[RMDB]
RNA sequence: GGGAACGACUCGAGUAGAGUCGAAAAGAUAUGGAUGCAUGGCAGGCGUACGACUAUUCGGAAACGAACGAAUCGUACGAACUACCUGCAUGCAUCCUAAGUCAAAACACGUCCUUCGGGACGUGAACUUCCACCAACAGUUCGCUGUUGGUGGAAGAAAAGAAACAACAACAACAAC
Reactivity to 2A3 in 0.01 (KOAc 150mM, MgCl2 10mM, bicine 150mM(pH8.5), 24C), signal-to-noise 2, nucleotides 027 to 126: g040a020u050a040u130g030g000a000u000g020c010a000u020g300g100c020a000g000g020c010g010u000a000c000g020a020c070u110a070u100u010c010g020g020a070a100a090c030g040a040a020c060g110a120a300u010c000g000u010a020c000g010a020a000c020u190a030c010c010u000g000c000a010u000g010c000a000u000c000c000u000a020a000g000u020c010a050a030a030a090c000a010c000g020u000c010c000u040u090c250g080g000g010a000c020g030u020g000a010a000
Reactivity to DMS in 0.01 (KOAc 150mM, MgCl2 10mM, bicine 150mM(pH8.5), 24C), signal-to-noise 2, nucleotides 027 to 126: g000a040u000a300u000g000g000a000u000g000c010a000u000g020g050c000a020g030g010c040g000u000a010c000g000a020c070u020a300u000u000c010g000g000a090a130a160c040g000a010a020c110g030a050a050u000c000g010u020a010c000g020a040a030c050u000a300c020c000u010g000c010a020u000g000c000a010u000c000c000u000a000a040g000u010c060a080a060a120a120c010a010c000g000u000c000c000u000u000c240g070g000g030a000c000g010u020g000a030a060
Structure probing data (2A3 and DMS) for a 177-nucleotide construct. The data come from the RNA Mapping Database (RMDB), library TTRDEL. The RNA was probed in 150 mM KOAc, 10 mM MgCl2 and 150 mM bicine (pH 8.5) at 24 C.